Conditions: 150 mM KOAc, 10 mM MgCl2 and 150 mM bicine (pH 8.5), 24 C. An RNA of 207 nucleotides, treated with 2A3 and read out base by base. Source: RMDB library M2RFPK, as collected in RNAgym.

[RMDB]
RNA sequence: GGGAACGACUCGAGUAGAGUCGAAAACGGUUACGCCUUCUUUACCGUUAUCAAGGAAGCUACUCGGCCAUGCUAAGGGAAGCAUUAUUCCUUAGGCGCAUGUCGCCGCCAGCAUGGUGUGAGGGGAAAAAGUAUGCUGGGUUCGCCCAGCAUACAAGCGAAUACUGGUGUUCGCACCAGUAUUCGCAAAAGAAACAACAACAACAAC
Reactivity to 2A3 in 0.01 (KOAc 150mM, MgCl2 10mM, bicine 150mM(pH8.5), 24C), signal-to-noise 1, nucleotides 027 to 156: c000g000g020u000u050a010c000g030c010c020u040u000c030u000u000u030a000c000c010g150u090u080a070u210c070a010a010g070g020a100a040g030c020u120a150c000u030c000g000g000c000c000a000u000g000c040u120a090a090g010g010g000a000a010g060c160a260u000u290a150u210u000c000c000u000u080a080g000g010c000g000c040a120u180g120u300c040g030c080c000g010c010c010a010g000c000a000u040g010g000u100g240u120g000a040g000g010g000g000a000a000a000a000a050g000u000a000u000g000c000u040g010g000g030u030u050c090g080c000c000c000a000g000c010a000u000a000c000a000a000